[RMDB]
This 177-nucleotide RNA was probed chemically with DMS. The RNA was probed in 150 mM KOAc, 10 mM MgCl2 and 150 mM bicine (pH 8.5) at 24 C. For DMS the reverse transcriptase was MarathonRT.
RNA sequence: GGGAACGACUCGAGUAGAGUCGAAAAAGGUCGAGCAGGCGCUGUCGGAUACCAGCUUCGGGAUCGUCACCACCACAGCCGGGCGGAUCGAGGCCCGCACCGAUCCGUGGGAUCCGGCGACCGAGCCUAUGUCUGGGUACUUCGGUACCCAGACAUAAAAAGAAACAACAACAACAAC
Reactivity to DMS in 0.01 (KOAc 150mM, MgCl2 10mM, bicine 150mM(pH8.5), 24C), signal-to-noise 1, nucleotides 027 to 126: a120g000g000u000c040g010a110g030c130a100g000g000c110g000c070u000g000u000c010g020g000a040u000a050c080c010a060g020c110u000u000c090g010g000g010a080u000c070g000u000c040a070c060c050a160c100c080a050c150a110g010c050c050g010g000g000c000g010g010a090u010c100g000a160g010g030c000c000c000g000c050a040c070c000g010a000u010c000c020g030u000g020g010g010a070u010c020c030g010g000c000g000a040c100c020g000a070g000c000c100